[RMDB]
RNA sequence: GGGAACGACUCGAGUAGAGUCGAAAAGGACUCCCAGUCGGCACAUGCGAUAUUUCAUACCACAAGAAUGUGGCGCUCCGCGGUUGGUGAGCAUGCUCGGUCCGUCCGAGAAGCCUUAAAACUGCGACGACACAUUCACCUUGAACCAAGGCGUGUAGAGAUACGACUACUUCGGUAGUCGUAUCUCAAAAGAAACAACAACAACAAC
Reactivity to 2A3 in 0.01 (KOAc 150mM, MgCl2 10mM, bicine 150mM(pH8.5), 24C), signal-to-noise 2, nucleotides 027 to 156: g080g000a030c000u020c000c000c010a000g010u010c000g040g080c050a020c020a090u120g040c050g060a080u050a130u190u130u060c090a070u080a170c010c040a130c050a140a080g000a000a010u000g000u010g000g000c010g030c010u070c060c040g010c000g010g000u000u000g000g120u030g010a090g020c000a030u300g020c000u000c000g060g010u000c050c220g090u070c000c010g010a000g000a010a000g000c000c000u120u120a060a140a010a000c000u020g000c000g270a300c000g000a000c260a000c000a000u000u000c000a020c000c000u000u040g060a100a050c090c000a040a030g050g000c010g060u090g040u020a050